[RMDB]
RNA sequence: GGGAACGACUCGAGUAGAGUCGAAAAGCGUACUACGUUGCUAUAAUCUGACAUUGUCAGCCUAUGAAGACAAAUCCCAAAUAGGAUUUGUCCCCAUAGGCUUGGAUUUAUGUCAGGUAGCAACGUAUCGCAAAACUGUCGAGUUCGCUCGACAGAAUACUAACGUCUAGUUCGCUAGACGUUAGUAAAAAGAAACAACAACAACAAC
Reactivity to 2A3 in 0.01 (KOAc 150mM, MgCl2 10mM, bicine 150mM(pH8.5), 24C), signal-to-noise 3, nucleotides 027 to 156: g000c010g050u080a080c090u000a010c020g000u020u000g010c000u020a030u050a220a300u170c010u000g000a010c000a000u010u020g030u010c000a000g000c000c000u020a000u010g010a120a070g000a000c000a000a000a000u020c020c030c020a120a300a130u300a080g000g000a000u000u000u000g000u000c000c000c010c000a010u010a030g010g000c000u000u020g010g000a000u020u290u220a000u010g000u000c000a000g010g000u010a000g000c000a000a010c000g000u020a020u020c000g000c000a020a040a040a140c000u010g000u000c000g000a010g000u060u170c250g050c070u000c000g000a000c000a000g000a020a020
Reactivity to DMS in 0.01 (KOAc 150mM, MgCl2 10mM, bicine 150mM(pH8.5), 24C), signal-to-noise 2, nucleotides 027 to 156: g010c020g030u000a050c110u000a010c010g020u000u010g040c010u000a030u000a180a120u000c020u010g020a040c000a010u000u000g000u000c010a070g000c020c000u000a010u000g010a010a010g000a000c010a010a010a010u000c010c000c010a050a190a280u000a070g010g000a030u000u000u010g010u000c000c010c000c000a010u000a000g020g010c000u010u000g020g000a000u010u000u000a010u000g010u000c000a020g040g020u010a010g030c000a000a000c020g020u000a010u000c010g040c010a070a060a080a110c000u000g010u000c000g000a030g020u000u010c300g050c010u000c000g010a020c000a000g000a100a180